[RMDB]
RNA sequence: GGGAACGACUCGAGUAGAGUCGAAAAUAAAAGGAGGAUGAGAAAUAUAGUGAGAUAUCGGUACUCCCACGCGCGUCUCUCAUUGAUAAGAGUGAUAAAAGGGUGAUUAUGUUAUAGCGCGCAAAAACCGUAUACUAUAGUUCGCUAUAGUAUACGGAAAAGAAACAACAACAACAAC
Reactivity to 2A3 in 0.01 (KOAc 150mM, MgCl2 10mM, bicine 150mM(pH8.5), 24C), signal-to-noise 6, nucleotides 027 to 126: u100a010a080a010a000g030g010a010g020g010a040u060g010a030g060a070a140a010u190a030u070a090g120u070g090a080g020a050u060a030u090c020g000g010u030a030c020u000c010c020c010a030c040g010c010g000c010g070u020c010u000c000u000c030a050u040u130g050a020u060a180a060g030a010g050u060g040a040u120a090a100a010a010g070g020g010u070g050a090u040u180a050u090g050u060u030a080u100a100g010c000g000c000g000c000a030a000a010a030a060
Reactivity to DMS in 0.01 (KOAc 150mM, MgCl2 10mM, bicine 150mM(pH8.5), 24C), signal-to-noise 8, nucleotides 027 to 126: u000a060a070a100a100g000g010a050g010g010a140u010g010a070g010a080a090a080u000a080u000a100g010u000g000a070g000a070u000a050u000c040g010g010u000a170c090u000c010c000c040a100c140g010c010g010c010g000u000c060u000c030u000c020a090u000u000g010a080u020a070a070g000a040g010u000g000a060u010a040a040a060a080g010g000g010u000g010a080u000u000a060u000g000u000u000a070u000a100g010c010g010c010g010c090a070a040a040a060a060

This 177-nucleotide RNA was probed chemically with 2A3 and DMS. The reactions ran in a buffer of 150 mM KOAc, 10 mM MgCl2 and 150 mM bicine (pH 8.5), at 24 C. The DMS profile rests on 13,089 reads. DMS (dimethyl sulfate) methylates the pairing face of unpaired adenines and cytosines. It was measured as part of the RMDB library M2PK90. 2A3 adducts were read by reverse transcription with SuperScript II with manganese.